[RMDB]
Record summary: The record gives the reactivity of an RNA of 177 nucleotides to 2A3 and DMS. The data come from the RNA Mapping Database (RMDB), libraries RFM100 and RFMREP. The RNA was probed in 150 mM KOAc, 10 mM MgCl2 and 150 mM bicine (pH 8.5) at 24 C.
RNA sequence: GGGAACGACUCGAGUAGAGUCGAAAAACGUGAGCUACGGCUCACGAACGCGGGGCGUGUGAGUGUGUGUGUGUGAGUGUGUGUCGCUCGGUCCACGCUCGUGCACACACCCGCACGCCCGCGCCAACCUUUUUGGCAGAUUCGUCUGCCAAAAAGGAAAAGAAACAACAACAACAAC
Reactivity to 2A3 in 0.01 (KOAc 150mM, MgCl2 10mM, bicine 150mM(pH8.5), 24C), signal-to-noise 5, nucleotides 027 to 126: a000c010g000u010g000a000g000c010u020a080c290g110g010c010u000c000a000c000g000a020a000c020g030c000g020g010g080g020c020g000u010g000u010g030a230g060u220g010u000g000u000g000u000g000u010g010u090g000a010g000u020g000u000g010u040g040u030c030g060c270u170c200g120g010u020c000c000a000c000g010c000u000c000g010u010g000c000a000c000a000c000a000c000c000c000g000c000a000c000g000c000c000c000g000c000g000c000c000a040a090
Reactivity to DMS in 0.01 (KOAc 150mM, MgCl2 10mM, bicine 150mM(pH8.5), 24C), signal-to-noise 1, nucleotides 027 to 126: a080c020g010u000g000a000g020c000u000a050c190g010g000c000u000c000a000c000g000a030a100c030g040c010g010g050g010g020c040g020u010g000u000g000a100g030u010g000u010g000u010g000u020g000u020g030u000g000a000g000u040g000u010g020u060g000u000c040g010c250u020c190g000g000u010c000c000a020c000g000c000u000c030g030u010g040c000a000c000a010c000a000c000c000c000g000c000a010c000g000c000c020c000g000c000g000c000c090a180a250

2A3 is a SHAPE reagent: it acylates the 2'-hydroxyl of flexible nucleotides of all four kinds. 2A3 adducts were read by reverse transcription with SuperScript II with manganese.